[RMDB]
RNA sequence: GGGAACGACUCGAGUAGAGUCGAAAACUGCAGGUCAACGGAGGAUCUUCAGAUCAGCUAUUGCAGAAGAAAGGUCAGCCAAGCGCUCUGGGCCUUUUCGACUGUAUAUAGGAGCUUCUGAUUUCAACCAGAAGCUAACUCUCUCCGAAACAAUGAGCCUGAUACCGGUAUUCGUACCGGUAUCAGGAAAAGAAACAACAACAACAAC
Reactivity to 2A3 in 0.01 (KOAc 150mM, MgCl2 10mM, bicine 150mM(pH8.5), 24C), signal-to-noise 1, nucleotides 027 to 156: c010u010g010c030a020g060g010u000c040a130a000c010g000g000a020g060g010a000u000c000u000u030c040a020g000a190u050c090a050g060c010u010a000u010u000g000c010a000g000a000a020g000a000a010a000g010g000u010c020a010g030c080c070a260a070g070c110g000c100u150c140u160g060g020g030c000c000u050u020u030u020c000g000a000c000u010g010u020a060u050a000u000a170g040g050a020g030c000u000u000c000u000g060a110u200u230u220c030a060a050c010c000a030g000a020a000g030c010u020a040a040c010u040c010u000c000u010c110c000g040a000a020a000c030a050a180u200g050a020g080